[RMDB]
This 177-nucleotide RNA was probed chemically with DMS. For DMS the reverse transcriptase was MarathonRT. It was measured as part of the RMDB library OK2TRN. Conditions: 150 mM KOAc, 10 mM MgCl2 and 150 mM bicine (pH 8.5), 24 C.
RNA sequence: GGGAACGACUCGAGUAGAGUCGAAAAGUACGGAUCAUCAUCGGAAUACAUUCGGUAACGGUGGCGCGGUACUUCUGUACCUGUCCCCAGAAGGCGCGGGCGCUGUAUUUCUCGACCAGCACAAAGAAUAAUUACUGACCUUCGGGUCAGUAAUUAUAAAAGAAACAACAACAACAAC
Reactivity to DMS in 0.01 (KOAc 150mM, MgCl2 10mM, bicine 150mM(pH8.5), 24C), signal-to-noise 2, nucleotides 027 to 126: g000u030a070c070g000g030a080u000c050a040u000c030a030u020c030g010g010a130a070u010a070c120a170u010u010c060g020g000u000a090a120c080g010g030u000g040g000c110g020c070g020g010u000a020c040u000u010c160u020g000u020a030c020c060u010g000u000c030c030c010c060a140g010a090a090g000g020c070g000c050g000g010g010c100g010c030u000g030u010a060u010u000u000c030u010c070g010a120c030c040a030g000c030a080c070a060a060a070g010a130